[RMDB]
RNA sequence: GGGAACGACUCGAGUAGAGUCGAAAAUUGGAAAUUGAUGGGAUGACUUUGACCUUAAAUGGUUGAAUGAGUGAGAUCUUUUGGACAUGUUCCGCACGGAACAGGAAGGAAAAGGCUAUAACAGAUCAAUAGUAGUUUGGUUCGCCAAACUACUAUUAAAAGAAACAACAACAACAAC
Reactivity to 2A3 in 0.01 (KOAc 150mM, MgCl2 10mM, bicine 150mM(pH8.5), 24C), signal-to-noise 7, nucleotides 027 to 126: u080u070g040g050a010a020a060u090u080g030a050u060g070g000g090a040u030g020a020c010u060u020u030g030a010c020c000u100u060a060a140a220u220g010g000u020u040g020a030a050u050g000a010g080u080g040a100g000a090u020c000u050u050u050u060g090g030a030c030a080u030g010u010u000c010c010g060c110a130c230g000g000a000a000c000a000g020g030a030a050g020g040a010a040a030a020g040g000c030u070a040u050a290a040c060a040g080a080u110c050
Reactivity to DMS in 0.01 (KOAc 150mM, MgCl2 10mM, bicine 150mM(pH8.5), 24C), signal-to-noise 9, nucleotides 027 to 126: u020u010g010g010a050a080a090u010u000g010a080u010g010g000g010a060u010g000a250c160u000u000u000g010a040c010c010u010u020a080a100a090u010g010g010u000u000g000a030a030u010g000a160g010u000g010a090g000a050u000c010u000u000u000u000g000g010a230c070a070u010g010u000u000c010c010g010c280a090c250g010g000a010a020c020a040g000g000a110a140g010g010a020a030a050a030g000g000c050u010a060u010a050a060c150a060g000a090u020c110

Description:
An RNA of 177 nucleotides, treated with 2A3 and DMS and read out base by base. The data come from the RNA Mapping Database (RMDB), libraries RFM100 and RFMREP. DMS adducts were read by reverse transcription with MarathonRT. Conditions: 150 mM KOAc, 10 mM MgCl2 and 150 mM bicine (pH 8.5), 24 C. For 2A3 the reverse transcriptase was SuperScript II with manganese. 2A3 is a SHAPE reagent: it acylates the 2'-hydroxyl of flexible nucleotides of all four kinds.